Background:
An RNA of 177 nucleotides, treated with DMS and 2A3 and read out base by base. For DMS the reverse transcriptase was MarathonRT. The 2A3 profile rests on 2,081 reads.

RNA sequence: GGGAACGACUCGAGUAGAGUCGAAAAGGAACGUUGUUCGCAACGUUCCGUGCCGGAAACGGACAUGAGGAUCGCGCGCAUGUCGGGAAACCGUAAACGCGAGCAUCAUGGUGUUCGCACCAUGAAAAGCCCCAACAUUAUUCGUAAUGUUGGGGCUAAAAGAAACAACAACAACAAC
Reactivity to DMS in 0.01 (KOAc 150mM, MgCl2 10mM, bicine 150mM(pH8.5), 24C), signal-to-noise 2, nucleotides 027 to 126: g010g000a000a000c000g020u010u000g010u010u010c220g030c000a020a000c010g010u000u000c010c020g000u000g030c040c010g000g000a110a080a180c060g000g020a050c040a020u010g010a120g000g000a050u010c040g020c010g010c050g030c050a100u000g000u000c000g020g010g000a090a120a140c180c020g000u000a040a070a090c070g000c000g000a030g010c200a150u010c000a010u000g010g010u000g010u000u010c160g020c020a030c020c010a000u010g000a020a040a090
Reactivity to 2A3 in 0.01 (KOAc 150mM, MgCl2 10mM, bicine 150mM(pH8.5), 24C), signal-to-noise 2, nucleotides 027 to 126: g020g000a010a010c010g000u010u020g010u050u090c190g060c080a020a000c000g020u000u040c000c000g010u040g030c000c000g060g060a190a100a000c120g030g000a030c000a040u050g030a060g060g080a130u060c040g000c000g000c010g000c050a020u050g050u110c000g000g020g030a090a080a010c030c020g000u110a030a090a080c040g000c000g010a010g060c000a050u010c010a010u010g000g030u000g000u030u020c130g020c060a000c010c000a000u020g010a020a040a000